[RMDB]
RNA sequence: GGGAACGACUCGAGUAGAGUCGAAAAGCGCAUGCACGCCGCGUCGCGGGGGUGGCUGAAAAGUUACCACAGGGAUAACUGGCUUGUGGCGGCCAAGCGUCCGCAGCGACGCCGCUUUUUGAUUCUUCGAUGUCGGCUCUUCCUAGCAUGGCGUGGCGCCAUGUGCCUAGUUCGCUAGGCACAUGGCAAAAGAAACAACAACAACAAC
Reactivity to 2A3 in 0.01 (KOAc 150mM, MgCl2 10mM, bicine 150mM(pH8.5), 24C), signal-to-noise 2, nucleotides 027 to 156: g000c040g040c070a070u240g060c070a050c070g030c020c020g010c000g030u060c030g000c010g050g000g010g010g000u040g000g020c000u020g050a070a070a090a010g080u100u150a060c010c010a030c010a050g000g010g050a080u100a250a140c060u080g180g040c010u030u060g030u020g050g000c000g030g020c010c000a060a010g060c030g080u010c000c000g100c050a030g000c000g000a000c020g030c000c000g000c000u020u000u000u010u000g000a000u000u020c000u030u030c050g030a050u240g020u030c000g010g020c000u010c020u060u060c010c000u040a050g020c030a080u080g040g020c010g000u010g050g030c040
This 207-nucleotide RNA was probed chemically with 2A3. The RNA was probed in 150 mM KOAc, 10 mM MgCl2 and 150 mM bicine (pH 8.5) at 24 C. The data come from the RNA Mapping Database (RMDB), library PDB130.